The record gives the reactivity of an RNA of 177 nucleotides to DMS and 2A3. The RNA was probed in 150 mM KOAc, 10 mM MgCl2 and 150 mM bicine (pH 8.5) at 24 C. The 2A3 profile rests on 3,134 reads. The DMS profile rests on 4,307 reads. For 2A3 the reverse transcriptase was SuperScript II with manganese.
[RMDB]
RNA sequence: GGGAACGACUCGAGUAGAGUCGAAAAUCUAACUCAUUCGUGAGUUAGAGUGAGGGCAGCGACCAUUGGGCCGGUGGCGCGCUGUCGGUGCCGCGCGUGGCGAUAGUGCUUGCUUCGGCAAGCACAAGAUUGAGGAAGUCUUCGGACUUCCUCAAUCAAAAGAAACAACAACAACAAC
Reactivity to DMS in 0.01 (KOAc 150mM, MgCl2 10mM, bicine 150mM(pH8.5), 24C), signal-to-noise 3, nucleotides 027 to 126: u000c000u000a000a000c010u000c000a030u000u020c230g020u010g020a040g010u000u000a010g010a030g020u010g000a110g020g010g010c020a050g010c000g010a150c010c020a060u000u010g020g020g020c020c020g010g020u000g000g010c050g010c030g020c010u000g000u010c020g000g010u000g000c040c030g000c150g000c090g020u000g000g000c040g030a080u000a090g000u000g000c000u000u000g000c000u010u000c160g020g000c000a000a000g000c000a010c010a020a040
Reactivity to 2A3 in 0.01 (KOAc 150mM, MgCl2 10mM, bicine 150mM(pH8.5), 24C), signal-to-noise 2, nucleotides 027 to 126: u000c000u000a000a020c000u000c010a030u040u060c180g150u010g030a010g000u000u000a010g000a010g000u130g090a140g040g020g030c030a020g000c010g050a020c030c000a020u040u100g020g050g000c020c020g010g010u020g010g070c160g000c020g010c120u020g030u010c020g000g060u080g010c040c020g020c000g020c050g130u130g030g000c030g030a050u110a110g020u000g010c010u010u000g000c000u010u020c090g070g000c010a000a000g000c010a000c000a000a020